The data come from the RNA Mapping Database (RMDB), library RFMREP. An RNA of 177 nucleotides, treated with DMS and 2A3 and read out base by base.
RNA sequence: GGGAACGACUCGAGUAGAGUCGAAAAUGUGCUGCGGUGGGACGUCAAGGUCAGUUCGUAUGCUGCGGGAAAUGGCCGCCGAGGAGGUAGGGCUUACGCUUGCGUUUGUCUGUUAUAUCUUGGUGGACUAAUAUGUUUUGUUCGCAAAACAUAUUAGAAAAGAAACAACAACAACAAC
Reactivity to DMS in 0.01 (KOAc 150mM, MgCl2 10mM, bicine 150mM(pH8.5), 24C), signal-to-noise 9, nucleotides 027 to 126: u010g020u000g010c030u000g020c080g010g020u010g010g010g010a070c080g010u000c130a080a110g010g010u000c050a070g010u000u000c080g010u010a070u010g010c050u000g010c040g000g010g000a040a070a090u010g010g010c020c010g020c020c020g000a040g010g000a090g000g010u000a090g000g000g000c020u000u000a020c040g020c040u000u000g020c020g030u000u000u000g010u000c020u000g000u010u000a060u010a070u000c020u000u000g010g020u000g000g010a240
Reactivity to 2A3 in 0.01 (KOAc 150mM, MgCl2 10mM, bicine 150mM(pH8.5), 24C), signal-to-noise 5, nucleotides 027 to 126: u110g020u040g010c020u020g010c020g040g020u070g030g030g030a030c020g040u080c070a070a040g060g020u040c010a010g010u040u040c010g010u040a060u150g040c020u030g000c010g000g020g030a040a120a090u120g080g000c020c010g000c010c010g010a030g020g020a020g030g030u100a040g010g020g000c000u020u010a000c020g020c040u070u090g020c010g000u010u030u030g000u000c020u000g150u180u070a130u000a020u070c020u020u030g010g010u030g010g000a010
The DMS profile rests on 33,445 reads.
For 2A3, 12,640 sequencing reads were counted.
2A3 adducts were read by reverse transcription with SuperScript II with manganese.
Conditions: 150 mM KOAc, 10 mM MgCl2 and 150 mM bicine (pH 8.5), 24 C.